Conditions: 150 mM KOAc, 10 mM MgCl2 and 150 mM bicine (pH 8.5), 24 C.
Structure probing data (DMS and 2A3) for a 177-nucleotide construct.
For DMS the reverse transcriptase was MarathonRT.
For 2A3 the reverse transcriptase was SuperScript II with manganese.
RNA sequence: GGGAACGACUCGAGUAGAGUCGAAAAUUGGGGAAUUCGCUGAGGAUUUCGGUGGCGAAGAUGGUGUCUUCGUCGCGGACGUAUUCGGUGUAGGCCUCGUCAAGCGCUACGACGACAUCCGCUGGCAAUGAUGGACCAAAUUCGUUUGGUCCAUCAUAAAAGAAACAACAACAACAAC
Reactivity to DMS in 0.01 (KOAc 150mM, MgCl2 10mM, bicine 150mM(pH8.5), 24C), signal-to-noise 2, nucleotides 027 to 126: u030u010g020g010g010g010a080a060u000u000c030g000c040u020g000a100g000g030a090u000u000u000c010g000g050u000g020g020c020g000a030a040g000a080u000g030g000u000g010u010c000u000u000c010g000u010c000g010c020g000g000a030c090g020u000a090u010u000c080g030g010u010g020u010a060g000g000c000c020u000c040g000u020c080a080a100g020c040g010c050u000a060c070g000a050c070g000a060c060a070u000c020c040g020c060u000g000g020c100a110
Reactivity to 2A3 in 0.01 (KOAc 150mM, MgCl2 10mM, bicine 150mM(pH8.5), 24C), signal-to-noise 2, nucleotides 027 to 126: u070u050g020g020g010g060a020a110u110u020c030g000c040u050g020a020g010g070a060u080u040u040c070g070g010u050g030g000c060g030a010a000g050a060u150g100g160u150g010u080c000u010u000c010g000u020c000g000c000g030g020a020c020g030u040a070u060u160c050g010g020u050g060u090a070g160g000c000c010u030c020g000u020c010a000a120g070c030g010c050u050a020c060g060a020c040g010a010c010a050u020c040c000g040c070u010g030g010c010a020